Record summary:
Chemical mapping of a 177-nucleotide RNA with 2A3. For 2A3 the reverse transcriptase was SuperScript II with manganese. The data come from the RNA Mapping Database (RMDB), library OK1LIB.

RNA sequence: GGGAACGACUCGAGUAGAGUCGAAAAGGGUUUAGGAUGUUAUGGUGCAGGGUUUAUCUUCCACGGGCGAGGCAACGCUUGGCGUGGGACCACCUUUGCUGGCCAUUGACUGCACUGAACAUUUAAACCUCACGCAUGGUUUCGACCAUGCGUGAGGAAAAGAAACAACAACAACAAC
Reactivity to 2A3 in 0.01 (KOAc 150mM, MgCl2 10mM, bicine 150mM(pH8.5), 24C), signal-to-noise 1, nucleotides 027 to 126: g110g000g030u100u090u080a020g000g050a060u000g000u040u030a230u300g020g030u020g010c000a030g000g050g000u060u150u100a170u190c080u080u010c030c000a000c000g030g000g090c010g030a000g000g040c080a030a090c070g060c040u030u030g130g000c000g000u040g000g000g040a130c030c080a000c010c000u090u140u060g000c110u060g110g030c100c000a000u010u030g030a020c010u000g000c010a050c000u000g040a000a000c000a000u000u000u150a040a030a030